[RMDB]
RNA sequence: GGGAACGACUCGAGUAGAGUCGAAAAGAACGCUACCGCAUAAACCGAACUUGACAAUUGUGCAGAAGCGAAAAAUGCUCCCGAUUGUCAACGGAGGAGCUAAGAAAGAAGAAAAGAAAAAGAAAAACAGUGAGUAGUACUUCGGUACUACUCACUGAAAAGAAACAACAACAACAAC
Reactivity to DMS in 0.01 (KOAc 150mM, MgCl2 10mM, bicine 150mM(pH8.5), 24C), signal-to-noise 2, nucleotides 027 to 126: g020a050a070c080g000c040u020a040c040c050g060c060a050u020a000a030a090c000c000g000a280a180c290u000u000g020a050c050a040a060u000u000g010u120g030c130a110g020a170a060g020c000g030a060a030a040a150a070u020g020c010u030c000c020c000g000a040u000u000g000u000c000a040a040c030g000g000a300g000g010a040g000c050u000a080a070g000a110a110a080g010a040a100g000a070a090a050a050g000a030a040a080a040a080g010a030a060a070a040a030
Reactivity to 2A3 in 0.01 (KOAc 150mM, MgCl2 10mM, bicine 150mM(pH8.5), 24C), signal-to-noise 4, nucleotides 027 to 126: g020a070a020c080g030c040u110a160c050c010g020c130a090u200a060a080a050c010c020g000a040a020c020u020u020g000a000c010a020a040u010u020g010u100g080c060a020g050a130a000g020c040g120a040a130a160a010a050u240g000c000u000c020c000c000g000a010u020u000g000u010c010a000a000c020g000g010a040g000g000a000g020c010u080a080a050g090a080a110a020g090a060a020g060a040a150a000a000g180a020a080a020a000a000g190a000a040a000a000a000